[RMDB]
RNA sequence: GGGAACGACUCGAGUAGAGUCGAAAAUAUCCAGGAGACGGAAAUGUCAUACAGCGGCGAACGAGAUAACUUUGCACCCCAUAUGGCGCUGGUGCCGAUGGUCAUUGAACAGACCUCACGCGGUGAGGUAUGUACUCCGGUUCGCCGGAGUACAUACAAAAGAAACAACAACAACAAC
Reactivity to 2A3 in 0.01 (KOAc 150mM, MgCl2 10mM, bicine 150mM(pH8.5), 24C), signal-to-noise 6, nucleotides 027 to 126: u110a030u030c020c000a050g050g100a110g030a020c030g050g090a080a080a060u130g030u030c010a020u080a160c020a050g050c030g040g000c020g020a030a030c040g010a030g030a170u080a140a070c050u080u050u090g000c040a090c010c000c000c020a030u050a120u210g040g000c040g020c110u070g080g050u080g000c000c010g040a040u080g010g000u030c030a070u010u130g040a050a020c040a050g030a030c000c010u020c010a040c030g220c020g050g030u030g010a020g000
Reactivity to DMS in 0.01 (KOAc 150mM, MgCl2 10mM, bicine 150mM(pH8.5), 24C), signal-to-noise 9, nucleotides 027 to 126: u010a100u010c010c020a130g010g010a130g010a050c060g010g010a070a080a080u010g010u000c050a110u020a110c110a110g010c060g020g010c030g010a050a050c080g000a100g010a090u000a060a090c090u000u000u000g010c090a110c050c030c030c060a110u010a080u000g000g010c030g020c110u000g020g020u010g010c030c030g000a060u000g010g010u010c060a060u000u000g010a090a090c190a080g000a070c020c000u000c040a040c060g010c130g010g010u000g020a040g010